[RMDB]
RNA sequence: GGGAACGACUCGAGUAGAGUCGAAAAAGUUUAGAUUUCGAUCUAAACUAGACCACUAAGAGGAUGACGUGUGACUACGACGCAUCUAGUAGAAUGCGCCCAGCUGUGAGCAGUUCGCUGCUCACAAAUCAAUGUGCAACUUCGGUUGCACAUUGAUAAAAGAAACAACAACAACAAC
Reactivity to 2A3 in 0.01 (KOAc 150mM, MgCl2 10mM, bicine 150mM(pH8.5), 24C), signal-to-noise 4, nucleotides 027 to 126: a000g020u000u000u000a010g000a000u070u050u070c240g050a010u000c000u010a000a000a010c000u010a010g030a030c030c020a040c080u100a080a060g060a070g200g000a060u040g020a070c010g010u040g050u070g140a080c070u090a020c150g100a010c030g010c010a010u000c030u020a010g010u000a020g030a230a060u060g020c010g010c010c020c010a040g050c060u030g000u020g010a000g000c010a010g000u020u090c210g040c070u000g000c000u000c010a000c010a000a010
Reactivity to DMS in 0.01 (KOAc 150mM, MgCl2 10mM, bicine 150mM(pH8.5), 24C), signal-to-noise 4, nucleotides 027 to 126: a030g010u000u000u000a000g000a000u000u010u020c180g010a020u000c000u010a000a000a020c000u000a070g010a210c040c020a070c120u000a080a110g010a080g000g010a090u010g010a070c050g000u000g000u010g000a130c140u010a040c090g010a140c090g010c020a010u000c020u000a100g010u000a080g000a090a070u000g000c100g010c010c010c060a110g010c150u000g020u000g000a010g020c000a020g000u000u020c220g020c000u000g000c000u000c000a000c000a020a040